[RMDB]
RNA sequence: GGGAACGACUCGAGUAGAGUCGAAAACAGUCAACGUGAAGGCGGGCCAGACCAUCGCCGCAUUCUACCAGAGCACCGUCAUGAUCUUUGGCACGAUGGCUCGCUACAUGCGAAGAGUUAGGGAAAAAAUAGGGCGCAUAUUCGUAUGCGCCCUAUUAAAAGAAACAACAACAACAAC
Reactivity to DMS in 0.01 (KOAc 150mM, MgCl2 10mM, bicine 150mM(pH8.5), 24C), signal-to-noise 1, nucleotides 027 to 126: c040a080g000u020c110a070a180c050g000u020g010a190a170g000g000c030g030g010g000c030c090a090g000a070c110c030a030u010c030g010c130c050g030c090a010u000u000c060u060a020c060c040a060g000a040g020c140a030c150c080g010u010c110a110u000g000a080u020c010u000u010u030g000g010c030a040c170g000a160u000g010g010c010u000c020g000c020u010a010c050a060u000g030c030g000a060a190g000a080g000u010u000a040g000g030g040a000a010a070a100
An RNA of 177 nucleotides, treated with DMS and read out base by base. Values cover nucleotides 27 to 126. For DMS the reverse transcriptase was MarathonRT. Source: RMDB library OK2TRN, as collected in RNAgym.